[RMDB]
RNA sequence: GGGAACGACUCGAGUAGAGUCGAAAAUGUGGAUACAAUCUCUUGUAUACGAUAUACUUAUUGUUAAUUUCAUUGACCUUUACGCAAUCCUGCGUAAAUGCUGGUAUAGGGUGUACUUCGGAUUUCCAGCGAAUCAGAUUUUCGAAUCUGAUUCGCUAAAAGAAACAACAACAACAAC
Reactivity to DMS in 0.01 (KOAc 150mM, MgCl2 10mM, bicine 150mM(pH8.5), 24C), signal-to-noise 3, nucleotides 027 to 126: u000g020u010g000g000a090u050a060c250a040a030u000c040u000c100u020u000g010u000a010u000a010c020g010a110u010a010u000a010c020u030u000a060u010u000g000u000u000a020a050u010u010u020c210a040u010u000g000a050c000c030u000u000u000a000c000g030c000a040a120u020c230c230u000g000c000g020u000a010a000a010u000g050c150u020g000g010u000a010u000a000g000g030g010u000g020u000a020c010u020u000c210g010g000a020u000u000u000c010c010
Reactivity to 2A3 in 0.01 (KOAc 150mM, MgCl2 10mM, bicine 150mM(pH8.5), 24C), signal-to-noise 6, nucleotides 027 to 126: u180g040u040g040g020a030u050a130c080a030a040u010c030u000c000u070u030g010u020a010u000a020c080g040a030u020a000u000a040c040u080u060a090u150u110g020u030u050a100a100u140u170u170c160a050u010u100g050a070c010c000u010u010u020a000c010g010c030a050a190u160c050c070u140g000c000g000u000a000a000a010u070g000c050u080g000g010u010a010u020a030g210g030g000u000g000u010a010c000u010u050c060g040g000a040u000u000u010c020c010
Structure probing data (DMS and 2A3) for a 177-nucleotide construct. It was measured as part of the RMDB libraries RFM100 and RFMREP.